The record gives the reactivity of an RNA of 177 nucleotides to DMS and 2A3.
[RMDB]
RNA sequence: GGGAACGACUCGAGUAGAGUCGAAAAACCCAGACAGUGCCUGCCUGUGGGAACGGCACUACUCAAGGCUGCCAGUCUGUCUGUGUCUUCAGCGUGGGCCCUCUUCACCUCCCAGGGCAGUCCGGGGUGCUCAACUCAAAUUCGUUUGAGUUGAGCAAAAAGAAACAACAACAACAAC
Reactivity to DMS in 0.01 (KOAc 150mM, MgCl2 10mM, bicine 150mM(pH8.5), 24C), signal-to-noise 4, nucleotides 027 to 126: a060c020c000c000a130g010a070c160a040g020u000g010c060c020u000g020c060c020u000g030u000g020g020g010a060a110c170g000g010c000a030c030u010a040c050u000c070a080a060g020g010c010u010g000c080c070a110g020u000c080u000g000u000c030u010g010u010g010u000c040u000u000c080a070g000c080g020u010g020g010g010c050c020c050u000c030u000u000c080a080c060c040u010c030c010c020a200g000g000g010c040a040g000u000c030c070g010g000g010g000
Reactivity to 2A3 in 0.01 (KOAc 150mM, MgCl2 10mM, bicine 150mM(pH8.5), 24C), signal-to-noise 1, nucleotides 027 to 126: a000c000c010c010a010g040a030c060a030g000u050g050c010c000u020g000c010c000u190g020u170g110g000g060a100a010c030g020g000c010a010c010u030a040c030u070c040a060a060g040g000c010u050g090c010c010a060g040u010c030u070g090u030c030u030g080u020g090u020c050u100u010c050a030g030c070g100u080g000g000g000c030c060c010u100c030u080u080c040a050c040c030u050c000c000c030a000g000g000g000c010a000g010u000c000c000g000g000g090g020
Overview:
Source: RMDB library OK2TRN, as collected in RNAgym.